Chemical mapping of a 207-nucleotide RNA with 2A3. The reactions ran in a buffer of 150 mM KOAc, 10 mM MgCl2 and 150 mM bicine (pH 8.5), at 24 C.
[RMDB]
RNA sequence: GGGAACGACUCGAGUAGAGUCGAAAACUCCACCCUGGGUAAUGGACGACGGCGGCGUGUGGCGAACAGGGAUACCGGUAGUCAGUGUCUGGAACAUCCCAAGGGGCGGCGGAGCUAGCACCCCGACAAAACGGGCACAAGUUCGCUUGUGCCCGAACGAUUUUAGAGUCUUCGGACUCUAAAAUCGAAAAGAAACAACAACAACAAC
Reactivity to 2A3 in 0.01 (KOAc 150mM, MgCl2 10mM, bicine 150mM(pH8.5), 24C), signal-to-noise 1, nucleotides 027 to 156: c010u040c020c000a070c020c000c050u010g020g010g000u140a080a090u100g020g020a040c040g010a010c010g050g040c030g010g000c040g010u130g010u010g050g000c030g050a050a010c040a100g000g020g020a000u080a090c010c060g010g030u120a040g030u060c080a010g070u010g060u090c030u010g040g010a060a070c030a070u060c010c020c010a060a060g000g030g000g000c080g030g000c050g010g080a050g030c040u030a050g010c010a070c000c000c010c000g020a030c040a020a270a040a020c010g010g000g000c000a000c000a000a000g060u100u160c150g060c190u000u010g000u000g010c060c000c000g000a000a000
Background
For 2A3 the reverse transcriptase was SuperScript II with manganese. Reactivities are given for positions 27 through 156. For 2A3, 656 sequencing reads were counted.